Structure probing data (DMS and 2A3) for a 177-nucleotide construct. It was measured as part of the RMDB library OK2TST. The RNA was probed in 150 mM KOAc, 10 mM MgCl2 and 150 mM bicine (pH 8.5) at 24 C. Reactivities are given for positions 27 through 126. DMS adducts were read by reverse transcription with MarathonRT. The 2A3 profile rests on 3,133 reads.

RNA sequence: GGGAACGACUCGAGUAGAGUCGAAAACGGCGUCGGCCCCGCGCUCGGGCAACCAGACGGCAUAUUCCAGGGCCAGGGUGUCGGAAGGAAGAACGCCGCGCAGCAGGUGCCAGGCGGCGCGGUGGUCCUUUCUAUCCGUGUUCGCACGGAUAGAAAGAAAAGAAACAACAACAACAAC
Reactivity to DMS in 0.01 (KOAc 150mM, MgCl2 10mM, bicine 150mM(pH8.5), 24C), signal-to-noise 4, nucleotides 027 to 126: c100g000g000c130g010u010c100g000g010c010c010c020c040g010c060g000c020u000c040g000g000g000c040a050a070c020c020a260g000a110c040g010g020c010a030u010a250u000u010c020c040a160g020g020g020c000c010a200g030g020g020u000g040u010c030g030g020a120a210g000g010a050a040g000a140a140c060g020c000c000g010c030g010c070a100g010c130a060g010g000u000g010c020c020a130g020g040c140g010g000c010g010c010g000g010u010g020g000u000c010
Reactivity to 2A3 in 0.01 (KOAc 150mM, MgCl2 10mM, bicine 150mM(pH8.5), 24C), signal-to-noise 2, nucleotides 027 to 126: c010g110g040c060g090u090c070g020g000c020c000c000c000g010c000g010c030u020c020g010g030g010c050a100a110c010c010a010g040a070c010g000g020c000a030u050a090u090u000c030c000a040g040g020g000c060c050a140g250g110g020u290g040u040c040g040g160a070a070g050g030a010a030g020a060a010c020g000c010c030g000c050g000c010a100g040c020a030g000g070u060g020c010c020a040g170g000c070g000g000c000g000c000g000g010u090g000g000u030c010